[RMDB]
RNA sequence: GGGAACGACUCGAGUAGAGUCGAAAAGUUGUUACGUGGGUGUGCAAACUGUUGAAGAUCUGCGUGCUCGCAUGACAUAUGUAUGCCAGUGUGGUGGUGAACGUCAUCGGCAAUUAGUCGAACACACAAGGAAUCUCCUUCGGGAGAUUCAAAAGAAACAACAACAACAAC
Reactivity to 2A3 in 0.01 (KOAc 150mM, MgCl2 10mM, bicine 150mM(pH8.5), 24C), signal-to-noise 4, nucleotides 027 to 129: g040u040u040g010u010u040a060c130g000u020g000g010g050u000g020u000g030c000a040a090a000c010u030g060u190u140g060a120a020g030a160u050c020u050g000c000g050u060g020c010u000c030g030c000a050u030g000a010c010a020u190a020u170g110u070a070u130g070c030c000a030g010u000g020u030g070g060u010g040g070u080g080a090a020c040g020u040c090a130u040c070g020g000c010a070a140u130u080a150g010u000c010g030a070a000c020a000c010a000c000a130a010g150
Reactivity to DMS in 0.01 (KOAc 150mM, MgCl2 10mM, bicine 150mM(pH8.5), 24C), signal-to-noise 3, nucleotides 027 to 129: g030u000u000g010u000u000a050c180g010u020g070g000g020u000g020u000g040c000a160a130a070c000u020g050u010u090g030a090a100g040a000u010c160u030g020c010g040u020g000c030u000c020g050c030a110u020g010a000c040a020u000a060u030g040u030a070u050g000c090c050a090g060u000g000u020g000g060u030g000g020u030g000a050a100c030g010u040c300a090u030c050g000g000c050a040a060u030u060a000g010u010c010g010a080a200c070a070c080a030c070a120a090g000

An RNA of 170 nucleotides, treated with 2A3 and DMS and read out base by base. The DMS profile rests on 9,141 reads. The 2A3 profile rests on 4,976 reads. The reactions ran in a buffer of 150 mM KOAc, 10 mM MgCl2 and 150 mM bicine (pH 8.5), at 24 C. For 2A3 the reverse transcriptase was SuperScript II with manganese.